Conditions: 150 mM KOAc, 10 mM MgCl2 and 150 mM bicine (pH 8.5), 24 C.
The record gives the reactivity of an RNA of 207 nucleotides to DMS and 2A3.
RNA sequence: GGGAACGACUCGAGUAGAGUCGAAAAACGAAGUCACCAGGGCUUGGAAAGGGAGAGUGACAGUACAGUUCUGGGCAGAGUCGGAACGUGUAUGCCACACGGACCCAGAGCUUCACAUCAGAUUCUGGCCAGUUCAAAAGUGAUGACCCAGAAUAAAUAGCUAUUUACUGUUCGCAGUAAAUAGCUAAAAAGAAACAACAACAACAAC
Reactivity to DMS in 0.01 (KOAc 150mM, MgCl2 10mM, bicine 150mM(pH8.5), 24C), signal-to-noise 2, nucleotides 027 to 156: a060c040g010a100a190g000u000c030a070c060c010a220g000g020g030c050u000u020g010g000a110a170a120g000g040g050a130g020a190g030u010g020a080c070a080g050u000a120c100a030g050u000u000c010u010g000g040g030c050a070g010a080g030u000c020g050g020a060a050c000g050u010g010u020a050u010g020c010c120a200c050a060c020g010g020a190c040c000c000a110g010a080g000c010u000u000c030a050c040a150u010c040a080g000a140u000u020c010u000g010g000c030c010a090g000u070u010c020a030a100a090a050g000u010g020a090u000g000a190c110c020c000a250g000a040a090u000a010a080a220
Reactivity to 2A3 in 0.01 (KOAc 150mM, MgCl2 10mM, bicine 150mM(pH8.5), 24C), signal-to-noise 3, nucleotides 027 to 156: a000c070g060a060a020g050u020c010a030c030c010a050g080g010g000c030u080u150g040g050a080a060a030g070g020g000a080g000a040g010u020g010a030c020a040g080u080a040c020a080g010u010u020c000u010g030g040g000c020a030g020a010g070u070c050g040g020a050a040c040g000u010g010u010a060u210g160c070c000a040c000a010c030g040g040a050c030c010c000a000g000a010g030c000u060u070c050a070c010a060u060c020a010g040a100u040u000c010u000g050g000c000c010a010g010u010u040c030a070a070a020a030g040u060g030a030u030g020a010c000c020c010a000g080a040a050u220a060a070a070
For 2A3, 2,282 sequencing reads were counted.